[RMDB]
RNA sequence: GGGAACGACUCGAGUAGAGUCGAAAAGAUAUGGACAAGCUUUGAUCUAUACGGACGUUGAAAUCGGAAACGAUGGAGUCCUAUAUAGGGAGCUUGUCCUAAGUCAAAACGCUUCUUCGGAAGCGAAGUAUAGCGCAGUGUUCGCACUGCGCUAUACAAAAGAAACAACAACAACAAC
Reactivity to DMS in 0.01 (KOAc 150mM, MgCl2 10mM, bicine 150mM(pH8.5), 24C), signal-to-noise 2, nucleotides 027 to 126: g000a080u010a300u000g000g000a010c000a020a030g000c000u000u020u010g010a140u020c030u000a020u000a090c300g000g010a010c030g010u000u050g030a120a110a050u000c000g000g000a150a120a210c040g000a040u010g010g020a080g010u000c000c000u000a140u000a030u010a000g020g010g000a020g010c000u000u000g000u010c000c000u000a000a040g000u000c030a050a030a150a130c010g000c010u000u000c000u000u010c290g070g010a000a000g000c000g010a010a080
Reactivity to 2A3 in 0.01 (KOAc 150mM, MgCl2 10mM, bicine 150mM(pH8.5), 24C), signal-to-noise 1, nucleotides 027 to 126: g010a030u050a080u140g000g000a010c000a020a010g020c030u060u120u190g100a120u120c010u000a010u000a050c130g000g020a010c040g130u300u090g060a060a060a000u020c010g000g000a030a060a050c000g080a000u010g020g000a030g000u000c020c000u010a020u000a000u000a070g030g000g000a010g000c010u000u000g010u000c000c000u000a000a000g010u000c010a020a040a000a060c020g010c010u000u000c030u060u060c230g160g000a030a040g000c000g020a090a000
About this RNA
An RNA of 177 nucleotides, treated with DMS and 2A3 and read out base by base. Reactivities are given for positions 27 through 126. The data come from the RNA Mapping Database (RMDB), library TTRDEL. The DMS profile rests on 1,098 reads.